[RMDB]
RNA sequence: GGGAACGACUCGAGUAGAGUCGAAAAGUGGAUUUGUUCGCAAAUCCACAAAUGCCAACAAGCCUGGCUGGCAGCCUAACAACCGAGCUACGCGGCGUAGCAAAAGGUUACACUUCGGUGUAACCAACAUCUAGAGUUGCUUCGGCAACUCUAGAUGAAAAGAAACAACAACAACAAC
Reactivity to 2A3 in 0.01 (KOAc 150mM, MgCl2 10mM, bicine 150mM(pH8.5), 24C), signal-to-noise 1, nucleotides 027 to 126: g010u000g010g000a010u020u000u000g040u030u040c090g000c100a000a000a000u000c000c000a000c000a000a010a000u050g000c010c020a010a010c010a080a080g180c030c090u090g070g000c020u000g020g000c040a040g010c010c010u020a040a030c030a010a010c020c040g020a060g010c000u040a010c010g020c040g260g000c070g020u000a000g000c010a070a060a000a000g020g000u000u000a000c010a000c000u050u130c230g050g010u010g000u020a000a000c000c000a000a020
Reactivity to DMS in 0.01 (KOAc 150mM, MgCl2 10mM, bicine 150mM(pH8.5), 24C), signal-to-noise 1, nucleotides 027 to 126: g020u000g010g030a010u000u000u000g010u000u010c190g040c030a010a000a000u000c000c000a000c000a000a040a100u010g000c000c010a030a080c030a080a050g030c160c090u000g030g060c080u000g020g000c000a060g000c020c010u000a030a020c020a030a020c030c030g020a110g000c000u000a010c060g000c080g000g020c040g000u000a010g020c060a080a060a110a110g040g030u000u000a000c000a000c000u000u020c110g020g010u000g000u000a000a000c000c000a040a060